[RMDB]
RNA sequence: GGGAACGACUCGAGUAGAGUCGAAAAUCGCGGUGGACAGUGCUCAAAAGUUUGAGCUGGCGCGUUGGAGGGUGGGGCGGGUGUGGGGGAGGCCCAACGGUUUGGCAAACUUUAAUCACUUGCCGCGCAGUUAUUUUAAGUUCGCUUAAAAUAACUGAAAAGAAACAACAACAACAAC
Reactivity to DMS in 0.01 (KOAc 150mM, MgCl2 10mM, bicine 150mM(pH8.5), 24C), signal-to-noise 3, nucleotides 027 to 126: u010c000g050c010g020g000u020g000g010a140c150a080g020u000g000c020u000c010a030a040a150a130g030u020u000u000g020a040g000c000u010g000g000c040g000c040g010u020u020g000g000a120g000g010g000u060g030g020g000g010c090g040g000g000u010g000u010g020g010g000g020g020a130g000g000c040c010c000a060a090c120g000g010u010u000u000g030g040c040a040a040a020c030u000u010u030a150a120u010c110a070c060u000u000g000c000c000g010c070g000
Reactivity to 2A3 in 0.01 (KOAc 150mM, MgCl2 10mM, bicine 150mM(pH8.5), 24C), signal-to-noise 2, nucleotides 027 to 126: u060c000g020c000g000g010u020g000g030a030c000a050g020u000g010c020u030c040a000a010a010a030g000u010u050u030g020a020g000c000u020g030g010c040g000c020g050u080u150g090g010a020g000g040g020u160g020g000g010g050c050g010g000g010u080g000u030g000g000g000g000g000a010g010g000c000c000c000a010a000c010g010g020u060u040u080g060g010c010a000a000a050c000u010u050u110a030a030u060c010a000c030u010u050g000c010c000g000c000g010